[RMDB]
RNA sequence: GGGAACGACUCGAGUAGAGUCGAAAAAGCGUAGCGGUACGCCGCUACGCAAGGCGCAUUUGAACUGUAUUGUACGCCUUGCAUAAAGCAAAAGUACUAAAAAAACGUGCCGAUACGACGGCACGAAAAAACAUCCAUUGGUUCGCCAAUGGAUGAACCUAGUUAGAUCCUUCGGGAUCUAACUAGGAAAAGAAACAACAACAACAAC
Reactivity to 2A3 in 0.01 (KOAc 150mM, MgCl2 10mM, bicine 150mM(pH8.5), 24C), signal-to-noise 3, nucleotides 027 to 156: a000g020c030g000u000a000g000c000g000g020u020a020c180g080c040c000g000c000u000a000c010g000c000a000a000g000g000c030g020c000a070u020u070u290g130a220a090c060u090g050u200a090u230u050g030u020a030c010g000c000c000u000u010g000c000a050u170a220a180a020g000c010a000a010a000a090g060u050a070c090u190a000a040a030a020a020a010a150c010g000u000g000c000c000g010a030u070a220c190g040a030c010g080g000c000a000c000g000a010a000a000a000a000a000c000a000u000c000c000a000u000u020g030g010u020u010c070g000c080c000a000a000u000g000g000a000u000g000a000a000